Chemical mapping of a 170-nucleotide RNA with 2A3 and DMS. For 2A3 the reverse transcriptase was SuperScript II with manganese.

RNA sequence: GGGAACGACUCGAGUAGAGUCGAAAAAGCGUACUUCAAGCUACUCUUUCUGAGUUUUCACACUUAGCUACCUUUGCUGAGUUGGAAGCUGCGCAGAAAGCCUAUCAGGAAGCUAUGGACUCUGGUGAUGGGCCUCCGUUCGCGGAGGCCAAAAGAAACAACAACAACAAC
Reactivity to 2A3 in 0.01 (KOAc 150mM, MgCl2 10mM, bicine 150mM(pH8.5), 24C), signal-to-noise 4, nucleotides 027 to 129: a000g010c010g010u020a030c030u030u120c050a030a020g020c010u040a030c010u000c000u030u050u000c020u050g010a000g020u000u000u030u010c060a080c010a010c050u050u000a010g010c000u080a210c020c050u280u170u090g000c020u000g010a000g000u010u000g000g000a000a000g000c030u040g070c170g000c010a000g050a000a010a000g010c000c000u100a160u110c000a000g000g040a050a000g040c050u080a120u120g040g040a040c030u020c030u040g030g010u080g030a030u090g040
Reactivity to DMS in 0.01 (KOAc 150mM, MgCl2 10mM, bicine 150mM(pH8.5), 24C), signal-to-noise 3, nucleotides 027 to 129: a070g030c120g020u020a180c070u000u000c140a110a080g010c120u030a130c060u040c050u020u020u000c040u040g000a030g010u000u000u000u000c040a130c090a000c030u030u000a020g000c020u040a090c260c190u090u080u090g030c030u020g030a060g060u000u080g010g010a010a030g000c040u010g050c250g000c000a010g080a040a030a080g030c140c040u020a060u000c090a080g030g000a000a000g020c000u020a030u030g000g000a050c050u000c050u000g030g010u020g020a110u000g000
Reactivities are given for positions 27 through 129. The DMS profile rests on 6,143 reads. DMS adducts were read by reverse transcription with MarathonRT.